[RMDB]
RNA sequence: GGGAACGACUCGAGUAGAGUCGAAAACAAUAAGGUCCAUGGCCUAGGGAAGUAACCUCCAUUGCACUUAGGAGGGGUGCUUUCCUAAGGUCUGCCCAAGUGGCAGAGCCUACGUCAUAAUUUGUGGCUAACAUGUUGGAUUCGUCCAACAUGUUAGAAAAGAAACAACAACAACAAC
Reactivity to 2A3 in 0.01 (KOAc 150mM, MgCl2 10mM, bicine 150mM(pH8.5), 24C), signal-to-noise 9, nucleotides 027 to 126: c040a010a130u210a180a050g040g010u040c040c040a060u130g030g000c000c020u010a010g000g000g000a000a000g010u020a040a050c000c000u000c010c010a060u060u290g110c120a080c190u140u200a090g000g040a020g000g020g020g050u100g020c000u010u000u000c000c000u000a010a010g000g000u000c000u000g000c000c000c000a200a100g090u250g060g000c020a010g010a020g040c000c020u060a070c070g110u090c050a040u040a180a160u080u090u180g080u050g030g000
Reactivity to DMS in 0.01 (KOAc 150mM, MgCl2 10mM, bicine 150mM(pH8.5), 24C), signal-to-noise 7, nucleotides 027 to 126: c060a100a080u030a080a060g010g010u000c030c050a060u010g000g000c000c220u010a010g010g000g000a010a010g010u000a170a140c000c000u000c010c010a160u020u020g030c180a100c200u020u020a120g000g010a030g000g000g010g020u020g000c000u000u000u000c000c010u000a020a040g010g010u000c000u000g010c010c000c020a120a140g010u020g010g010c000a040g000a090g000c010c000u000a080c160g010u010c060a040u010a090a100u020u010u020g010u010g000g000

About this RNA: The record gives the reactivity of an RNA of 177 nucleotides to 2A3 and DMS. Conditions: 150 mM KOAc, 10 mM MgCl2 and 150 mM bicine (pH 8.5), 24 C. The data come from the RNA Mapping Database (RMDB), libraries RFM100 and RFMREP.